[RMDB]
RNA sequence: GGGAACGACUCGAGUAGAGUCGAAAACGGUCUCAGACAUUGAGUCGAGCAAGGGAGGUUUGAUAUCAUCCAAAGUAAGCUUCAGAUCAACGCUCAAAGUCUGAGCCAAGAUUGUAACUGACUGAUUAUUGAAAGGCGUACUAUUUAUUAAGCCUCCAAGAGUGUAAGUCUUCGGACUUACACUCUUAAAAGAAACAACAACAACAAC
Reactivity to DMS in 0.01 (KOAc 150mM, MgCl2 10mM, bicine 150mM(pH8.5), 24C), signal-to-noise 2, nucleotides 027 to 156: c120g020g000u020c000u000c020a140g020a090c070a180u000u020g020a090g030u000c050g000a140g010c080a080a220g000g010g030a080g030g020u000u010u000g020a200u000a070u000c220a090u000c190c130a130a110a150g010u000a030a080g030c040u010u000c030a150g000a090u000c050a060a150c030g030c010u020c030a030a010a200g040u000c060u000g000a040g010c020c020a050a260g000a100u010u030g000u000a080a090c080u000g010a200c060u010g000a090u000u000a090u010u010g010a120a090a060g020g090c030g030u010a050c110u000a120u000u000u020a110u020u000a030a110g000c030c020u000c050c050
Reactivity to 2A3 in 0.01 (KOAc 150mM, MgCl2 10mM, bicine 150mM(pH8.5), 24C), signal-to-noise 2, nucleotides 027 to 156: c080g000g200u200c030u000c000a030g000a010c040a030u000u040g010a020g070u230c060g020a030g060c090a010a160g100g000g000a010g060g000u040u050u110g030a080u030a010u060c100a070u010c030c150a060a050a000g090u080a090a070g050c010u170u130c070a030g030a240u080c030a070a120c060g000c010u000c010a040a000a000g020u010c020u000g000a000g000c000c000a000a010g070a080u090u110g030u110a100a030c060u030g130a040c040u040g050a130u070u080a090u180u110g030a040a080a040g000g030c030g050u030a020c030u030a160u120u100u010a090u050u130a050a070g020c030c000u040c030c010